RNA sequence: GGGAACGACUCGAGUAGAGUCGAAAACUCGGUGCUUGGCUUUAUUGACGAGAUUAGAAACCGAGGGAUUAGGCACAGAUCGCAGCCAAUUCUCAAUGUCUCUAUUGAGGGUGCGAUAGAUAAGCGCUUAAGUGAUAUUUCUAUUUGGGAUCGCGUGAGAGUACGCAAAAUUCGUUUUGCGUACUCUAAAAGAAACAACAACAACAAC
Reactivity to DMS in 0.01 (KOAc 150mM, MgCl2 10mM, bicine 150mM(pH8.5), 24C), signal-to-noise 2, nucleotides 027 to 156: c030u000c020g000g020u000g010c050u000u000g020g000c050u000u010u010a160u050u010g040a060c040g000a080g030a270u000u010a140g010a130a140a020c000c010g030a050g040g010g010a160u010u000a040g020g000c000a050c050a240g000a070u000c010g050c030a070g000c020c000a120a130u010u010c010u000c000a000a090u000g000u010c080u000c050u010a160u000u000g000a080g020g040g000u010g000c000g010a050u000a080g020a130u020a120a190g000c010g000c030u010u000a030a050g040u000g010a130u000a110u000u000u010c010u000a120u000u010u000g020g010g040a120u010c040g040c040g020u010g000
Reactivity to 2A3 in 0.01 (KOAc 150mM, MgCl2 10mM, bicine 150mM(pH8.5), 24C), signal-to-noise 3, nucleotides 027 to 156: c000u000c000g000g010u050g010c010u010u030g050g050c040u070u140u220a180u300u150g020a040c030g010a010g020a070u090u220a110g120a180a080a000c010c000g000a030g020g000g020a040u040u080a020g000g040c010a020c000a040g040a040u000c000g030c020a060g220c040c020a080a130u200u050c010u020c000a000a040u020g130u080c020u000c050u300a010u010u030g000a000g040g000g000u020g000c010g010a010u010a010g070a020u090a140a070g070c040g000c090u100u050a060a030g040u040g100a030u030a030u110u140u010c080u020a100u020u020u120g020g020g050a100u050c020g000c010g070u100g020

Structure probing data (DMS and 2A3) for a 207-nucleotide construct. The data come from the RNA Mapping Database (RMDB), library OK3TST. For 2A3, 1,351 sequencing reads were counted.